This 177-nucleotide RNA was probed chemically with 2A3. The reactions ran in a buffer of 150 mM KOAc, 10 mM MgCl2 and 150 mM bicine (pH 8.5), at 24 C.
[RMDB]
RNA sequence: GGGAACGACUCGAGUAGAGUCGAAAAUAAGGUGCUGCUUUUAAACGAUACGCUGAAGCAUAUCCACCUGCACCUCUGCUAUUUGAAUGCCAUCUUUACAAGUCACUUUAGCGUUUUCGUGAAUGCCUCGGCCGGUAUAGUUCGCUAUACCGGCCGAAAAAGAAACAACAACAACAAC
Reactivity to 2A3 in 0.01 (KOAc 150mM, MgCl2 10mM, bicine 150mM(pH8.5), 24C), signal-to-noise 2, nucleotides 027 to 126: u080a070a000g060g000u070g010c020u010g030c030u200u130u000u300a080a210a000c010g020a000u030a050c020g000c010u020g050a000a020g050c080a130u020a030u070c000c030a000c020c000u000g010c000a000c020c010u000c010u080g090c070u080a080u060u130u070g110a180a080u090g000c000c050a070u020c000u000u090u070a060c070a140a130g030u040c040a020c040u000u000u070a020g000c000g040u140u000u100u100c000g000u000g010a020a020u090g020c000c060